[RMDB]
Chemical mapping of a 177-nucleotide RNA with 2A3 and DMS. Conditions: 150 mM KOAc, 10 mM MgCl2 and 150 mM bicine (pH 8.5), 24 C. For 2A3 the reverse transcriptase was SuperScript II with manganese. It was measured as part of the RMDB library OK2TST. The DMS profile rests on 2,078 reads.
RNA sequence: GGGAACGACUCGAGUAGAGUCGAAAAGGACCGCUACGGCCUGAACCUGGUCAAGCAGCACGGCUUGGCGCGCUCCCGUGAUGCCGUCCACGCGCGCAUCGACCAGUUCGGUGGCGCGGUAUGACGCCCCACGGAUUGAUUUCGAUCAAUCCGUGGGAAAAGAAACAACAACAACAAC
Reactivity to 2A3 in 0.01 (KOAc 150mM, MgCl2 10mM, bicine 150mM(pH8.5), 24C), signal-to-noise 2, nucleotides 027 to 126: g030g030a110c030c000g000c070u150a060c110g070g020c010c020u040g020a030a030c020c070u040g050g050u050c050a050a030g000c040a020g050c080a020c140g110g020c030u040u040g040g000c010g010c060g010c040u040c010c020c000g020u110g050a070u150g050c070c020g020u000c030c010a080c020g030c000g010c010g030c010a030u040c020g020a000c010c060a060g040u170u010c000g000g020u020g000g000c010g000c080g010g010u090a080u090g020a030c020g010c010
Reactivity to DMS in 0.01 (KOAc 150mM, MgCl2 10mM, bicine 150mM(pH8.5), 24C), signal-to-noise 3, nucleotides 027 to 126: g010g020a070c000c030g020c140u000a090c140g020g000c030c010u000g020a070a090c140c050u000g000g030u000c110a070a070g020c020a090g010c150a150c250g010g000c020u000u000g010g020c030g010c100g010c040u000c030c010c040g020u040g020a110u000g000c080c030g010u010c010c170a130c000g000c030g010c020g010c020a030u010c040g010a050c030c200a120g010u020u000c010g030g000u000g000g000c040g000c000g020g030u000a020u010g000a020c050g060c140